[RMDB]
RNA sequence: GGGAACGACUCGAGUAGAGUCGAAAAGAAAGAGUGGGUGUGUCAGACAGGCAGUGCAUUGCUAGCUGGCUGUUAGAACUUCGUCCCAACAGUGGCUAGCUGCACUACCCUCUGCUGCACUUAGAAACGCGACCUGUACGUUCGCGUACAGGUCGCGAAAAGAAACAACAACAACAAC
Reactivity to 2A3 in 0.01 (KOAc 150mM, MgCl2 10mM, bicine 150mM(pH8.5), 24C), signal-to-noise 2, nucleotides 027 to 126: g080a030a090a000g160a020g070u180g000g000g000u020g000u050g000u000c000a000g000a070c060a040g000g010c000a000g000u010g020c000a070u100u260g010c020u000a010g000c010u030g250g020c000u000g020u050u030a080g030a090a020c010u180u100c150g090u030c070c080c010a000a000c000a020g000u000g000g000c000u000a010g000c000u000g000c010a010c000u010a000c010c000c000u020c020u000g040c010u010g010c010a000c000u000u000a030g080a040a140a000
Reactivity to DMS in 0.01 (KOAc 150mM, MgCl2 10mM, bicine 150mM(pH8.5), 24C), signal-to-noise 1, nucleotides 027 to 126: g000a060a080a110g000a020g050u000g000g000g000u000g010u010g010u000c000a020g000a020c300a120g000g020c000a000g020u000g000c060a100u140u080g050c020u000a000g000c020u000g000g020c000u000g000u020u010a090g010a000a000c020u080u000c180g000u020c010c000c040a000a000c040a000g000u000g000g000c000u000a000g000c000u000g020c020a000c000u000a000c000c000c300u000c000u000g010c000u000g020c000a000c050u000u030a150g020a130a100a250